[RMDB]
RNA sequence: GGGAACGACUCGAGUAGAGUCGAAAAGGGGUCGAGCUUUUGACGUAUGCCGGUGAACUGAUGACCCAUGGCUGAAGCCUCCACGGCCAUGGCAAGGUUCACAGGCAUACGAUAAGCUCGACGGAGGCACCCAAAGGUCCUGAUUCGUCAGGACCAACCCUGAAACUUCGUUCGCGAAGUUUCAGGGAAAAGAAACAACAACAACAAC
Reactivity to 2A3 in 0.01 (KOAc 150mM, MgCl2 10mM, bicine 150mM(pH8.5), 24C), signal-to-noise 1, nucleotides 027 to 156: g090g010g070g050u020c030g000a020g010c020u000u080u230u300g240a170c160g010u000a000u000g010c000c000g020g000u000g000a000a000c000u030g020a150u050g000a300c000c000c000a000u000g000g000c000u010g060a120a020g040c000c000u010c000c000a000c010g000g010c030c000a000u010g000g000c000a010a300g000g000u030u000c000a000c000a000g000g000c000a000u000a000c000g000a000u020a000a000g000c020u000c000g020a000c010g000g000a000g000g000c040a050c010c000c000a130a090a060g020g000u000c010c010u000g010a000u050u120c290g060u000c060a000g000g000a000c000c000a000a020
Structure probing data (2A3) for a 207-nucleotide construct. Values cover nucleotides 27 to 156. 2A3 adducts were read by reverse transcription with SuperScript II with manganese. The reactions ran in a buffer of 150 mM KOAc, 10 mM MgCl2 and 150 mM bicine (pH 8.5), at 24 C. The 2A3 profile rests on 1,186 reads.